RNA sequence: GGGAACGACUCGAGUAGAGUCGAAAAUCCUAAGUCGAUGCAGUGUCACUUGGAUUUAUCUAGGCUAGUCUGUCGGAAACGACAGACUUGGACCCUAGAUUGUCAGUGACACCUGCAUCGAUAUGGAAAAACCUGCUUUCGUUCGCGAAAGCAGGAACUCUCUACUGCAGUUCGCUGCAGUAGAGAGAAAAGAAACAACAACAACAAC
Reactivity to 2A3 in 0.01 (KOAc 150mM, MgCl2 10mM, bicine 150mM(pH8.5), 24C), signal-to-noise 4, nucleotides 027 to 156: u030c010c000u040a130a020g020u010c000g000a000u000g010c000a010g020u000g000u000c000a010c040u090u250g120g000a060u300u280u020a020u030c000u000a010g040g000c000u000a010g020u010c000u000g010u000c010g010g050a110a070a060c010g000a000c000a000g000a030c020u000u010g020g020a040c010c010c000u000a000g000a000u010u030g020u000c000a000g000u000g000a000c000a000c000c000u010g000c000a000u000c000g000a000u000a010u020g000g040a030a040a060a010a030c000c000u010g010c010u020u010u000c010g050u010u060c220g010c010g170a000a000a000g000c000a000g010g000a000a000
Reactivity to DMS in 0.01 (KOAc 150mM, MgCl2 10mM, bicine 150mM(pH8.5), 24C), signal-to-noise 1, nucleotides 027 to 156: u000c000c000u000a060a300g010u000c020g020a000u000g010c010a240g000u010g020u000c010a010c050u010u000g110g010a070u010u010u000a000u000c010u000a030g010g000c040u010a010g010u000c010u000g020u020c000g030g010a210a130a300c010g010a030c030a020g010a000c010u000u000g040g010a120c250c020c000u000a030g000a040u000u000g000u010c000a060g010u010g010a000c010a030c100c070u010g000c000a010u000c010g020a000u010a070u000g080g000a050a130a080a120a090c000c010u000g010c010u000u000u000c000g000u000u000c300g020c030g000a010a010a040g000c020a010g000g000a010a020